Structure probing data (DMS and 2A3) for a 177-nucleotide construct. The 2A3 profile rests on 1,344 reads. For DMS the reverse transcriptase was MarathonRT. For DMS, 1,007 sequencing reads were counted. The reactions ran in a buffer of 150 mM KOAc, 10 mM MgCl2 and 150 mM bicine (pH 8.5), at 24 C.
RNA sequence: GGGAACGACUCGAGUAGAGUCGAAAACAUCGCGGCACCACCGGAACUCGACGUAGCCACAGUCUGAUCCCCUGUAUCCUGAUGCGCGCGGCCACCACCAUCGGCGCCAGCGGUGAAAUGAUUUGCACGACGAUCUUUCAUUCGUGAAAGAUCGUCGAAAAGAAACAACAACAACAAC
Reactivity to DMS in 0.01 (KOAc 150mM, MgCl2 10mM, bicine 150mM(pH8.5), 24C), signal-to-noise 1, nucleotides 027 to 126: c110a140u020c000g070c000g000g000c050a060c010c000a090c040c040g000g000a020a050c070u000c100g000a150c110g070u000a100g030c050c030a020c040a070g000u000c040u060g000a050u000c020c000c080c010u000g010u000a100u010c030c060u050g000a130u000g000c060g000c080g050c060g020g000c020c010a030c140c020a090c190c010a080u000c200g000g010c190g020c020c000a070g000c010g000g000u060g040a070a000a030u050g000a100u000u020u000g000c180a180
Reactivity to 2A3 in 0.01 (KOAc 150mM, MgCl2 10mM, bicine 150mM(pH8.5), 24C), signal-to-noise 2, nucleotides 027 to 126: c020a060u060c000g010c010g040g000c010a040c030c010a040c020c010g050g050a040a010c030u030c020g070a070c030g040u040a010g040c010c020a050c010a000g050u020c020u070g060a090u070c000c000c000c000u000g060u080a100u060c040c010u070g070a050u080g050c010g000c000g000c000g070g000c000c020a000c000c000a030c000c000a050u140c060g060g000c010g000c000c010a010g000c010g000g070u040g020a050a110a090u150g030a100u050u090u120g070c140a060